[RMDB]
RNA sequence: GGGAACGACUCGAGUAGAGUCGAAAACUGGGCCACACGGUACGCCUGAUCGCACCGCAGUUCGUAAAACCCUACGUCAAGGGUGACAAGCACGAUGCACACGACGCCGAGGCGAUCUGCGAAGCCAGGCUCGGAAAAUAUUCGUAUUUUCCGAGCCAAAAGAAACAACAACAACAAC
Reactivity to DMS in 0.01 (KOAc 150mM, MgCl2 10mM, bicine 150mM(pH8.5), 24C), signal-to-noise 3, nucleotides 027 to 126: c030u000g010g000g030c040c030a040c140a110c190g010g000u020a130c110g030c020c190u010g010a030u000c050g050c000a050c040c070g020c030a080g030u000u000c000g020u010a070a080a140a070c000c000c000u000a110c270g000u020c280a080a040g000g000g000u000g020a100c170a070a100g000c010a110c210g010a110u000g000c020a120c190a040c020g010a060c000g010c060c030g020a140g000g000c020g000a020u030c000u010g000c030g000a180a080g010c010c040a090
Reactivity to 2A3 in 0.01 (KOAc 150mM, MgCl2 10mM, bicine 150mM(pH8.5), 24C), signal-to-noise 2, nucleotides 027 to 126: c000u000g000g050g020c020c000a030c010a050c140g030g020u060a020c020g010c020c090u050g030a040u030c020g000c020a050c010c030g000c020a050g050u110u070c010g000u010a040a050a030a030c000c000c020u040a060c070g250u140c160a090a030g020g030g010u020g040a040c050a070a070g030c030a040c230g200a130u260g000c030a040c000a000c100g000a000c000g010c070c040g010a030g020g020c000g000a010u000c000u020g010c020g030a050a030g030c010c010a030

Chemical mapping of a 177-nucleotide RNA with DMS and 2A3. It was measured as part of the RMDB library OK2TST. For DMS, 1,545 sequencing reads were counted. For 2A3, 2,592 sequencing reads were counted.